[RMDB]
Structure probing data (2A3) for a 177-nucleotide construct. 2A3 adducts were read by reverse transcription with SuperScript II with manganese. Conditions: 150 mM KOAc, 10 mM MgCl2 and 150 mM bicine (pH 8.5), 24 C. Values cover nucleotides 27 to 126.
RNA sequence: GGGAACGACUCGAGUAGAGUCGAAAAGUCGACAUCAAAGCCUGCGACGCAUCAAUCACGUACGACUACUUCCUAUCGCUCAUUUGCGGAGCAAUGCACGAGGGAUUCGAAGUCGGCGACAAUCAUGGGUUACGGGUCGAUUCGUCGACCCGUAACCAAAAGAAACAACAACAACAAC
Reactivity to 2A3 in 0.01 (KOAc 150mM, MgCl2 10mM, bicine 150mM(pH8.5), 24C), signal-to-noise 2, nucleotides 027 to 126: g010u000c000g040a080c040a060u160c100a150a070a070g100c000c060u090g000c030g070a050c030g040c080a070u060c020a090a140u170c070a030c160g040u110a130c000g060a000c010u040a070c010u060u050c020c000u090a300u270c030g000c090u000c000a130u100u060u140g040c040g110g030a060g030c050a050a030u040g000c000a000c020g010a000g000g000g000a010u050u130c040g070a080a000g000u000c020g000g130c000g000a040c020a050a070u170c060a170u180g130